An RNA of 177 nucleotides, treated with DMS and 2A3 and read out base by base. Conditions: 150 mM KOAc, 10 mM MgCl2 and 150 mM bicine (pH 8.5), 24 C. For 2A3, 684 sequencing reads were counted. The data come from the RNA Mapping Database (RMDB), library RFMREP.

RNA sequence: GGGAACGACUCGAGUAGAGUCGAAAACUGUGAUGCCCUUAGAUGCACGCGCGCUACAAUAAUAUUUCCUAGACCGAGAGGUCCGGGUAAACCGCUGAACCGCUUUCAUGCUUGGGAUUGUGAACUGCCUAUUUUAGGUCUUCGGACCUAAAAUAGGAAAAGAAACAACAACAACAAC
Reactivity to DMS in 0.01 (KOAc 150mM, MgCl2 10mM, bicine 150mM(pH8.5), 24C), signal-to-noise 1, nucleotides 027 to 126: c110u000g010u000g000a150u000g010c040c000c020u010u000a010g000a100u000g010c090a010c060g000c030g000c050g020c030u000a070c120a050a050u010a100a130u000a190u000u000u000c000c000u000a080g020a010c000c020g010a250g000a180g040g000u000c000c030g000g000g000u010a060a060a100c100c080g020c080u000g010a040a100c070c040g000c050u020u000u000c020a040u000g000c030u000u020g010g000g000a080u000u010g010u010g020a030a150c110u000g010
Reactivity to 2A3 in 0.01 (KOAc 150mM, MgCl2 10mM, bicine 150mM(pH8.5), 24C), signal-to-noise 1, nucleotides 027 to 126: c010u030g110u120g130a070u090g030c030c000c010u050u100a120g040a140u080g040c040a000c030g040c010g000c000g020c020u100a070c100a030a000u200a230a030u050a070u090u130u050c000c000u020a010g000a020c010c000g000a000g000a050g160g000u010c010c000g030g000g030u030a030a020a040c030c020g010c030u010g050a030a010c000c010g030c000u040u170u110c000a030u050g040c060u070u070g010g050g060a110u020u140g070u000g040a060a080c020u100g010
For 2A3 the reverse transcriptase was SuperScript II with manganese. In probing experiments dimethyl sulfate is read out at A N1 and C N3, which are open when not base-paired.